[RMDB]
RNA sequence: GGGAACGACUCGAGUAGAGUCGAAAAGCGCCGAGCUUAACCUGCAGAAGUUCACAUAAAAAGUGCCCCUCUGGGGAAUACACGACGGGACUUACCUGUAUGGUGGCAACGGCUCGAAGAGGGAUCCGCUUACCUUUAACUUCGGUUAAAGGUAAGCAAAAGAAACAACAACAACAAC
Reactivity to 2A3 in 0.01 (KOAc 150mM, MgCl2 10mM, bicine 150mM(pH8.5), 24C), signal-to-noise 1, nucleotides 027 to 126: g090c030g000c020c010g010a050g020c000u100u070a040a060c000c000u000g030c020a000g000a050a000g030u070u020c050a060c030a250u290a170a180a070a050a030g040u020g020c000c000c000c000u100c120u160g030g010g000g050a030a030u210a090c010a000c030g050a020c040g070g050g000a010c010u030u100a160c000c010u010g000u020a040u300g040g000u000g010g000c000a100a170c030g000g000c030u030c030g050a060a020g040a070g070g070g000a040u060c050c030
Reactivity to DMS in 0.01 (KOAc 150mM, MgCl2 10mM, bicine 150mM(pH8.5), 24C), signal-to-noise 1, nucleotides 027 to 126: g000c180g060c030c010g030a300g000c000u000u000a110a030c000c000u000g030c010a000g010a060a000g000u000u000c030a110c070a140u000a080a030a070a080a280g000u000g000c040c000c000c030u000c140u040g020g020g010g000a220a010u010a230c000a030c040g000a080c300g000g020g000a030c000u040u000a080c200c040u040g000u030a050u000g110g000u010g000g000c030a080a110c020g000g030c000u000c080g010a100a050g040a110g000g000g000a090u000c100c040